Source information: The data come from the RNA Mapping Database (RMDB), library M2PK50. An RNA of 177 nucleotides, treated with 2A3 and DMS and read out base by base. For 2A3, 1,642 sequencing reads were counted.

[RMDB]
RNA sequence: GGGAACGACUCGAGUAGAGUCGAAAACGACUUACCUUCGGGUAAGUCGACAUAGGUGAGUACAUCGGAUAGCUGCCUAGGUGAGUUCAUCGGAUAGCUGCCACAUGUAACGGUUCGCCGUUACAAAUUGUUACAACCGAUUCGUCGGUUGUAACAAAAAAGAAACAACAACAACAAC
Reactivity to 2A3 in 0.01 (KOAc 150mM, MgCl2 10mM, bicine 150mM(pH8.5), 24C), signal-to-noise 1, nucleotides 027 to 126: c000g000a000c010u000u000a010c000c010u050u060c190g000g020g000u010a000a000g020u010c010g010a000c000a050u130a030g000g080u060g140a060g040u020a010c020a090u050c080g100g020a050u000a030g040c020u050g060c020c040u090a100g020g080u080g100a130g010u010u120c060a020u010c010g030g010a030u030a060g000c000u010g040c000c000a080c020a040u080g010u000a000a000c000g000g030u030u040c220g030c060c000g010u010u000a000c010a000a080a040
Reactivity to DMS in 0.01 (KOAc 150mM, MgCl2 10mM, bicine 150mM(pH8.5), 24C), signal-to-noise 2, nucleotides 027 to 126: c020g000a000c000u000u000a010c000c000u010u030c170g020g010g020u010a000a010g010u000c000g010a030c160a070u010a070g000g030u000g000a070g000u010a060c090a090u000c070g000g000a070u000a050g010c030u010g010c030c020u000a110g040g010u000g040a140g020u000u010c100a020u010c030g020g020a070u000a050g020c030u010g010c000c020a100c210a160u000g020u000a010a010c000g010g010u000u000c250g020c000c000g020u000u000a010c010a010a070a090
About this RNA: For DMS, 1,822 sequencing reads were counted. Values cover nucleotides 27 to 126.